[RMDB]
RNA sequence: GGGAACGACUCGAGUAGAGUCGAAAACUGUGAGCAGAACAUGGAAAACUCUGUUUACAUUACAGUAAGCUGUUUUCUGCUGCAUUUACAAUUCUGCUGUGCAAAUAAAUUAAGGGGACUUAUGACAGCUCAAUUUACUUUAUCUGGUGAAACCCCACCGCAUAAGCUGAUUCGUCAGCUUAUGCGGAAAAGAAACAACAACAACAAC
Reactivity to 2A3 in 0.01 (KOAc 150mM, MgCl2 10mM, bicine 150mM(pH8.5), 24C), signal-to-noise 2, nucleotides 027 to 156: c020u010g010u010g100a000g050c000a000g000a020a080c050a180u210g000g020a020a010a030a000c040u080c050u070g040u030u010u010a030c030a020u120u230a020c060a020g010u060a000a000g050c000u000g050u030u000u030u030c020u010g100c020u030g000c030a080u160u190u090a110c080a020a130u060u000c010u070g000c010u010g010u060g060c020a040a050a260u210a170a010a050u220u170a180a150g120g000g000g020a030c110u200u130a090u200g050a030c010a010g000c050u030c100a130a130u050u100u100a070c130u060u140u220a260u170c010u090g040g000u020g070a070a030a010c000c000c000c000a010
An RNA of 207 nucleotides, treated with 2A3 and read out base by base.
For 2A3 the reverse transcriptase was SuperScript II with manganese.
The data come from the RNA Mapping Database (RMDB), library OK3TST.
Reactivities are given for positions 27 through 156.
The reactions ran in a buffer of 150 mM KOAc, 10 mM MgCl2 and 150 mM bicine (pH 8.5), at 24 C.